[RMDB]
RNA sequence: GGGAACGACUCGAGUAGAGUCGAAAAGAAAAGGACUGCACCGAAAUAUUUCAAUCAAAAUCAUUUAUCGUUUUGUUUAGCUAUUUUUUUCUCAAAUUAUCACUCUUUUCUUCCUUUUUCAUUCUCUUUAGAAAACUUUAUUCGUAAAGUUUUCUAAAAAAGAAACAACAACAACAAC
Reactivity to 2A3 in 0.01 (KOAc 150mM, MgCl2 10mM, bicine 150mM(pH8.5), 24C), signal-to-noise 3, nucleotides 027 to 126: g020a010a070a010a010g040g000a030c030u030g000c030a020c040c000g010a010a090a010u090a030u050u240u100c030a020a020u040c020a030a040a010a150u040c020a070u070u120u240a130u130c030g010u000u010u020u050g010u010u070u060a030g000c010u020a100u030u100u000u000u000u070u000c030u020c020a110a190a140u160u100a100u150c010a050c030u050c020u000u060u060u000c000u000u040c010c000u010u100u020u070u020c000a010u080u010c020u000c000u000